[RMDB]
RNA sequence: GGGAACGACUCGAGUAGAGUCGAAAAUGGUGAAGGUGACCCUGCCGUCGCCGAUGACGUAGCUCAGCCGGCGGUUGACCCGGUAGGUCCCGCCGGGGGUGUGCACCCAGGGCAGCAUGCGCAGGAGGAUAUUGGAAGGGUUCGCCCUUCCAAUAUCAAAAGAAACAACAACAACAAC
Reactivity to DMS in 0.01 (KOAc 150mM, MgCl2 10mM, bicine 150mM(pH8.5), 24C), signal-to-noise 3, nucleotides 027 to 126: u010g000g020u010g010a080a080g000g030u000g000a100c060c040c020u000g010c020c010g000u000c020g020c020c010g020a110u020g010a070c080g030u010a210g000c020u000c050a140g000c050c000g000g010c010g010g010u010u020g000a040c000c010c160g020g010u020a130g010g010u000c000c000c000g010c000c000g020g000g000g010g020u000g010u010g000c080a080c020c010c040a120g000g000g010c050a060g030c050a040u000g000c130g000c060a050g010g020a190g000
Reactivity to 2A3 in 0.01 (KOAc 150mM, MgCl2 10mM, bicine 150mM(pH8.5), 24C), signal-to-noise 2, nucleotides 027 to 126: u120g060g000u050g010a080a030g060g060u040g020a050c020c020c010u020g040c010c000g020u030c030g020c010c010g010a020u080g030a000c060g020u100a030g010c000u010c040a070g070c020c000g000g000c020g040g020u080u190g010a010c070c000c000g090g100u250a090g000g000u000c000c000c000g000c000c000g010g000g010g010g010u050g030u090g020c040a010c000c010c000a030g020g000g020c010a020g000c030a060u080g010c040g000c080a000g040g030a020g090